[RMDB]
The record gives the reactivity of an RNA of 207 nucleotides to 2A3 and DMS. For DMS the reverse transcriptase was MarathonRT. The DMS profile rests on 2,807 reads.

RNA sequence: GGGAACGACUCGAGUAGAGUCGAAAACAAACGCGUUCGCGCGUUUGAAAAACCGUAGGCGACCCAGGACAUGCUGUCAGGUUCGAAAGAGCCUGGUCAGCAACAGCCUGUCAAUUCGGUCGCCUAAACGGAAAAAACUGUGUGUUCGCACACAGAACAUGUUAUACCAGUUCGCUGGUAUAACAUGAAAAGAAACAACAACAACAAC
Reactivity to 2A3 in 0.01 (KOAc 150mM, MgCl2 10mM, bicine 150mM(pH8.5), 24C), signal-to-noise 3, nucleotides 027 to 156: c000a000a010a000c000g070c000g020u060u080c160g000c000g000c020g120u000u060u020g010a010a000a010a010a000c000c000g010u010a010g000g020c000g000a010c000c020c020a000g000g030a070c040a130u040g000c000u010g000u030c000a010g020g030u000u020c020g060a160a120a120g000a010g010c000c030u000g010g050u220c010a000g000c000a010a000c010a000g030c000c010u040g040u100c050a050a130u230u170c040g010g000u010c000g010c010c000u050a010a030a000c000g010g000a080a020a000a080a000a100c010u000g020u000g010u000g030u080u110c230g030c100a000c000a000c000a010g010a010a010
Reactivity to DMS in 0.01 (KOAc 150mM, MgCl2 10mM, bicine 150mM(pH8.5), 24C), signal-to-noise 1, nucleotides 027 to 156: c020a000a040a000c010g070c040g030u010u000c240g050c040g100c020g000u020u000u000g000a080a130a090a080a160c010c030g020u000a020g010g000c000g020a010c010c000c010a170g030g020a030c010a280u000g000c030u010g040u000c020a000g020g000u000u010c010g000a190a180a300g000a020g020c000c000u000g010g040u050c030a090g020c000a090a030c050a170g000c020c010u010g000u010c080a070a210u010u000c010g020g010u010c010g040c020c000u010a000a010a020c030g000g010a000a040a070a130a060a100c030u010g020u020g020u000g000u000u010c250g000c000a010c000a000c020a000g020a100a220